[RMDB]
RNA sequence: GGGAACGACUCGAGUAGAGUCGAAAAUCAUUUGGCUUGAUACUGAGGGUGCAUUAAGGAACAAGCAUCAGGCUGUCUUGGCUUUAUCUCGUGCUGUGUGUUGCUAAGACAGAGAAUAAGACGGAGAGACAGGGAGAAAGGAUGGCUCAGGUUUGGCCAGAGUGAAUUGGUUCGCCAAUUCACUCUGAAAAGAAACAACAACAACAAC
Reactivity to 2A3 in 0.01 (KOAc 150mM, MgCl2 10mM, bicine 150mM(pH8.5), 24C), signal-to-noise 4, nucleotides 027 to 156: u080c040a050u060u050u130g020g000c030u030u030g040a040u090a210c030u060g020a090g060g010g000u030g030c030a060u040u140a150a040g070g000a070a050c060a130a020g030c020a030u060c050a030g120g000c000u010g000u000c000u000u010g000g000c000u010u130u120a130u070c070u020c040g150u180g060c130u080g020u030g000u000g030u120u090g000c010u010a010a010g000a000c010a010g020a000g010a010a020u180a050a040g040a020c040g030g020a020g010a000g010a070c030a050g020g040g000a030g070a050a040a000g060g010a020u050g030g000c010u000c020a030g060g000u050u080u070g050g020c050
Reactivity to DMS in 0.01 (KOAc 150mM, MgCl2 10mM, bicine 150mM(pH8.5), 24C), signal-to-noise 2, nucleotides 027 to 156: u000c030a090u000u000u010g010g050c040u000u010g010a140u000a040c060u000g010a150g020g040g000u000g030c030a110u000u010a130a120g040g000a050a110c040a070a100g020c040a080u000c040a010g000g010c010u000g020u000c010u000u010g010g020c030u000u000u000a060u010c040u000c040g060u010g000c080u000g010u010g010u010g020u000u000g000c010u010a080a050g000a050c030a100g010a150g020a080a080u010a070a090g010a100c020g000g010a120g020a110g010a050c050a040g000g040g010a070g000a090a070a060g020g010a060u000g000g000c000u000c030a060g010g000u000u000u000g010g000c080